[RMDB]
RNA sequence: GGGAACGACUCGAGUAGAGUCGAAAAAGGUGCAUGCCGAGGUGCGGUAGGCCUCGUUAACAAACCGCAAAAAAAUAGUCGCAAACGACCAAAACUACGCACUCGCAGCUUAAUAACCUGCGCUGAGAAAACCCGACUACCUUCGGGUAGUCGGGAAGGUAAAGACUAGGUUCGCCUAGUCUUUACCAAAAGAAACAACAACAACAAC
Reactivity to DMS in 0.01 (KOAc 150mM, MgCl2 10mM, bicine 150mM(pH8.5), 24C), signal-to-noise 1, nucleotides 027 to 156: a070g040g000u000g030c040a120u020g040c140c020g040a080g050g050u010g010c030g060g010u000a090g020g000c000c000u000c040g000u000u000a050a100c080a040a200a100c030c050g020c060a050a030a050a120a080a120a130u010a030g000u000c000g030c030a100a130a080c030g000a050c040c000a030a100a030a060c000u000a000c070g030c000a090c040u010c040g020c040a050g000c020u000u000a100a210u000a050a060c220c030u000g000c060g000c080u000g030a180g010a140a050a070a210c020c010c010g000a020c000u000a030c000c000u000u000c300g000g000g000u000a010g000u000c000g000g000g000a000a000
Reactivity to 2A3 in 0.01 (KOAc 150mM, MgCl2 10mM, bicine 150mM(pH8.5), 24C), signal-to-noise 2, nucleotides 027 to 156: a010g050g000u040g000c040a040u100g070c070c010g020a010g000g000u020g020c000g030g020u010a020g020g050c030c000u010c010g120u060u050a020a010c010a020a030a020c010c010g000c000a050a050a070a010a010a000a140u150a040g010u010c010g020c090a050a110a100c040g030a000c030c020a000a080a110a100c030u110a040c090g000c010a030c010u060c010g000c000a010g000c000u030u040a030a000u040a080a060c000c000u010g010c020g020c090u100g020a050g080a080a110a000a010c030c000c000g000a000c000u000a000c000c030u020u050c170g080g020g000u000a000g010u000c000g010g010g000a000a000
Background: Chemical mapping of a 207-nucleotide RNA with DMS and 2A3. Conditions: 150 mM KOAc, 10 mM MgCl2 and 150 mM bicine (pH 8.5), 24 C. DMS adducts were read by reverse transcription with MarathonRT.